RNA sequence: GGGAACGACUCGAGUAGAGUCGAAAAACAGAAUUCAGUGUAGGCCGGGAGUUGAGACUGGUGUGUGUUUAGUGGAUUAUCUGAUCAGCACAUGUGUGACAGUGUUGAUCACAAGUCAUUGCCAGCUAGCCAUAAGAUAGUUCGCUAUCUUAUGGCUAAAAGAAACAACAACAACAAC
Reactivity to 2A3 in 0.01 (KOAc 150mM, MgCl2 10mM, bicine 150mM(pH8.5), 24C), signal-to-noise 5, nucleotides 027 to 126: a000c050a030g140a090a090u150u080c030a020g020u030g020u100a040g010g000c020c010g000g030g010a050g000u070u060g040a030g030a090c030u030g010g060u040g010u030g000u000g040u020u060u070a130g010u090g090g000a070u050u040a040u150c040u020g000a000u000c000a000g000c020a050c110a200u050g060u030g080u140g100a040c040a050g000u000g000u010u000g010a000u000c000a010c000a010a000g010u020c020a050u000u130g070c020c010a020g020c040u010
Reactivity to DMS in 0.01 (KOAc 150mM, MgCl2 10mM, bicine 150mM(pH8.5), 24C), signal-to-noise 5, nucleotides 027 to 126: a070c100a100g010a080a060u020u000c070a070g020u000g000u010a070g000g010c060c050g020g000g020a070g010u000u000g010a080g000a080c050u000g000g010u010g010u010g020u010g000u000u000u000a080g010u000g010g000a060u010u010a080u010c170u000g000a010u010c010a010g000c000a010c020a080u000g030u010g010u030g010a110c060a050g010u000g000u000u000g010a010u000c010a020c140a050a070g010u010c010a050u010u000g010c020c020a070g010c100u000

An RNA of 177 nucleotides, treated with 2A3 and DMS and read out base by base. For DMS the reverse transcriptase was MarathonRT.